RNA sequence: GGGAACGACUCGAGUAGAGUCGAAAAUGUAGCUAAAUCAAAUGCUGUGAAUGUAAUAAUUUCAAGAACAUCACCUGCAGAUAAAGCUGGACUUAAACCUGUAAUACUGGUGCCGUUAGAUGCUGUGUAAUCUUGAGCACGAACAAGCAAUACACCGAGUACUAUGACCAUUCGUGGUCAUAGUACUAAAAGAAACAACAACAACAAC
Reactivity to 2A3 in 0.01 (KOAc 150mM, MgCl2 10mM, bicine 150mM(pH8.5), 24C), signal-to-noise 6, nucleotides 027 to 156: u160g030u050a010g010c030u050a040a080a120u090c060a120a070a070u050g000c020u020g030u020g080a180a100u020g010u050a050a090u080a120a150u140u190u140c130a080a040g030a050a010c010a020u020c000a010c010c100u070g000c010a000g010a060u070a040a080a020g010c020u030g020g080a040c020u110u110a100a060a030c010c010u030g060u100a110a070u060a190c080u080g040g000u030g030c010c010g030u010u050a070g010a110u080g040c050u020g000u000g020u110a040a060u050c020u040u050g040a040g050c020a010c070g050a110a020c030a070a000g030c000a030a050u060a070c030a000c000c030g010
Reactivity to DMS in 0.01 (KOAc 150mM, MgCl2 10mM, bicine 150mM(pH8.5), 24C), signal-to-noise 3, nucleotides 027 to 156: u020g000u000a050g020c050u010a050a180a110u010c080a110a100a130u000g040c020u010g030u000g000a150a090u000g010u010a090a150u010a080a150u000u010u000c090a080a140g000a090a050c030a040u000c040a030c030c070u000g000c030a080g010a120u010a060a110a090g030c030u020g030g020a150c070u000u000a040a100a070c000c030u000g030u000a080a100u000a060c070u010g010g030u000g000c030c060g000u000u000a090g010a150u000g010c050u020g000u020g010u010a140a080u000c070u000u000g000a090g000c030a060c030g010a040a080c050a070a070g030c000a080a100u010a090c010a090c010c040g010

Chemical mapping of a 207-nucleotide RNA with 2A3 and DMS. Conditions: 150 mM KOAc, 10 mM MgCl2 and 150 mM bicine (pH 8.5), 24 C. Reactivities are given for positions 27 through 156. The DMS profile rests on 6,330 reads. For DMS the reverse transcriptase was MarathonRT. High DMS reactivity at an A or C suggests that its Watson-Crick edge is free. Reactivities are rounded to 0.1 and cut off at 0 and 3.